[RMDB]
RNA sequence: GGGAACGACUCGAGUAGAGUCGAAAAGACACGAGUUCCCGGAACAGACUCUCUCAACCGCCAAGUUUUGAAGGGACAAAAGUCCAAGUGCGCCUCAGCUCAAAAGGCGGAACAAAACAAAAGCAAAAUAUCAGUAGCAUUUCGAUGCUACUGAUAUAAAAGAAACAACAACAACAAC
Reactivity to 2A3 in 0.01 (KOAc 150mM, MgCl2 10mM, bicine 150mM(pH8.5), 24C), signal-to-noise 2, nucleotides 027 to 126: g030a000c010a000c120g020a040g040u040u040c010c000c000g010g040a120a030c020a050g050a070c000u010c010u000c000u000c080a010a070c040c000g000c010c020a070a020g000u020u060u080u080g090a100a090g040g000g000a020c030a030a300a020a030g010u010c020c000a110a000g070u050g060c010g000c010c020u050c040a070g030c030u020c080a060a090a000a030g000g000c000g040g010a040a000c010a000a020a010a000c020a010a100a010a020g080c000a000a000a170
Reactivity to DMS in 0.01 (KOAc 150mM, MgCl2 10mM, bicine 150mM(pH8.5), 24C), signal-to-noise 2, nucleotides 027 to 126: g010a100c110a030c040g020a100g000u010u000c000c000c000g000g010a090a080c090a100g010a070c040u010c020u000c030u000c050a100a150c160c080g010c050c050a100a190g000u000u000u010u010g010a110a070g020g000g000a010c040a090a070a070a080g000u000c010c010a090a080g010u010g010c050g020c000c000u000c040a140g020c110u000c140a070a050a060a030g010g020c000g030g000a080a160c090a010a040a060a020c060a040a060a110a090g010c100a060a040a070